[RMDB]
RNA sequence: GGGAACGACUCGAGUAGAGUCGAAAACGAUAGUCUUCGGACUAUCGAAAAAUCCUAAGUCCGAGAGGUCCGAGCUCAACAGCUAUCGGAAACGAUAGACAUGAGCGAGGACUACCCACCUCGGAUAUGGAAAAAAACGAUGUCUUCGGACAUCGAACUAGUGAAUUCCGUUCGCGGAAUUCACUAGAAAAGAAACAACAACAACAAC
Reactivity to 2A3 in 0.01 (KOAc 150mM, MgCl2 10mM, bicine 150mM(pH8.5), 24C), signal-to-noise 1, nucleotides 027 to 156: c000g000a000u000a000g010u020c020u040u050c250g040g000a010c000u000a000u000c000g000a010a000a010a010a000u050c010c000u040a120a050g020u000c000c000g030a010g000a020g000g010u020c010c010g010a030g000c000u000c000a030a080c020a150g060c000u000a020u000c010g030g140a110a060a020c020g000a010u030a000g050a110c070a140u050g000a000g000c000g010a020g010g000a000c000u000a010c000c000c010a080c010c000u000c040g020g000a010u020a020u030g020g060a050a100a020a040a010a000a070c020g000a000u010g010u000c010u030u060c240g130g000a000c000a000u000c000g020a010a020